[RMDB]
RNA sequence: GGGAACGACUCGAGUAGAGUCGAAAAUGAGCAGCAGAGUGAGUGAGACUCCAUCUCCCCCCAAAAAAAGUUUCACUGGACAUAGUAGCUCACACUUGUAAUCCCAGCACUUUGGGAAGCCAAAGCAAAAUAGAUCACUGUUCGCAGUGAUCUAUUUAAAAGAAACAACAACAACAAC
Reactivity to DMS in 0.01 (KOAc 150mM, MgCl2 10mM, bicine 150mM(pH8.5), 24C), signal-to-noise 5, nucleotides 027 to 126: u000g010a020g010c020a300g020c050a140g010a100g020u020g000a050g030u000g000a050g010a050c010u000c050c100a140u010c110u000c020c010c000c010c000c010a000a000a050a070a060a050a020g000u010u000u000c030a020c010u000g010g010a080c050a070u010a100g010u000a110g010c010u000c020a010c100a100c140u000u000g000u000a080a120u000c000c000c010a160g020c180a100c020u010u010u000g000g000g000a100a080g000c010c010a000a020a020g020c180a070

About this RNA: An RNA of 177 nucleotides, treated with DMS and read out base by base. The reactions ran in a buffer of 150 mM KOAc, 10 mM MgCl2 and 150 mM bicine (pH 8.5), at 24 C. It was measured as part of the RMDB library OK2TRN.